[RMDB]
RNA sequence: GGGAACGACUCGAGUAGAGUCGAAAAGGCCUCCGCUGAAGGCCCUGACCUGCCCCAGCGCUCCCGAGAAGCCCUGGAUGGAAUGCAGCUUUUCCAGGUUGCAGGCCUUGAUAUGAGCUUACAGAGGGCAAGGGGUCAGAGGUCAGAAGCAGGGCCAAAUUAUGCUCAUGUUCGCAUGAGCAUAAUUAAAAGAAACAACAACAACAAC
Reactivity to DMS in 0.01 (KOAc 150mM, MgCl2 10mM, bicine 150mM(pH8.5), 24C), signal-to-noise 1, nucleotides 027 to 156: g000g010c010c010u000c010c040g050c060u000g020a300a140g010g000c000c000c000u000g020a020c010c000u000g000c020c000c000c090a220g040c170g030c010u000c010c030c000g020a300g000a040a080g000c030c010c000u010g010g010a140u000g000g000a070a060u000g020c040a030g030c000u010u010u010u010c180c230a160g040g010u010u000g000c040a030g010g010c010c020u000u010g000a300u000a050u000g020a090g020c030u020u010a120c060a190g010a070g030g030g030c040a220a080g000g000g010g020u000c060a050g000a010g090g010u000c000a070g020a300a100g010c030a080g010g000g000c000c000a070
Reactivity to 2A3 in 0.01 (KOAc 150mM, MgCl2 10mM, bicine 150mM(pH8.5), 24C), signal-to-noise 4, nucleotides 027 to 156: g000g000c020c010u130c120c190g020c010u040g030a040a030g030g000c000c000c000u000g010a000c000c010u060g050c000c020c010c010a070g070c050g010c090u090c020c040c040g080a130g020a070a020g020c000c000c020u030g020g020a030u040g030g030a080a040u160g060c050a060g070c040u060u110u140u030c030c020a020g030g050u050u120g030c010a010g020g070c000c010u000u010g010a010u040a080u210g010a010g000c000u060u110a100c080a060g080a300g080g010g000c060a070a100g060g000g000g000u010c000a010g070a120g060g000u000c010a010g020a000a000g010c010a010g000g000g000c000c000a010